[RMDB]
RNA sequence: GGGAACGACUCGAGUAGAGUCGAAAAGAGGAAGGAGCUCUCGAACGCCCCCCCGACCCUCGGAUGGGCCGCUUCCGGCAGGGAAGCCCGAAGGUGGGAGAGGGGGAGAACACUUCGAGAGUUGGGGGAACCCUUACCUUCGGGUAAGGGAAAAGAAACAACAACAACAAC
Reactivity to DMS in 0.01 (KOAc 150mM, MgCl2 10mM, bicine 150mM(pH8.5), 24C), signal-to-noise 8, nucleotides 027 to 129: g000a110g010g010a050a030g020g010a140g000c000u010c020u000c000g020a020a010c240g000c090c030c010c000c000c010c010g030a300c000c010c010u040c030g010g010a250u000g000g000g000c090c110g010c130u000u000c010c000g000g000c240a100g030g020g000a020a120g000c010c010c010g010a220a140g040g000u040g010g000g000a080g000a160g010g000g000g000g000a010g000a100a090c110a160c170u010u000c020g000a030g030a040g040u010u000g000g000g000g000g000a080a160
Reactivity to 2A3 in 0.01 (KOAc 150mM, MgCl2 10mM, bicine 150mM(pH8.5), 24C), signal-to-noise 9, nucleotides 027 to 129: g060a010g020g020a040a020g020g040a010g000c000u000c000u000c000g000a020a010c060g030c000c000c000c000c000c000c000g060a080c010c050c000u010c000g050g040a100u150g110g020g030c050c040g100c030u040u020c020c010g110g100c100a130g110g010g030a030a020g030c000c000c010g030a050a020g100g070u140g020g020g020a040g050a050g000g000g000g010g000a020g010a030a000c030a010c020u020u010c000g000a000g000a000g010u010u010g000g000g000g000g010a040a060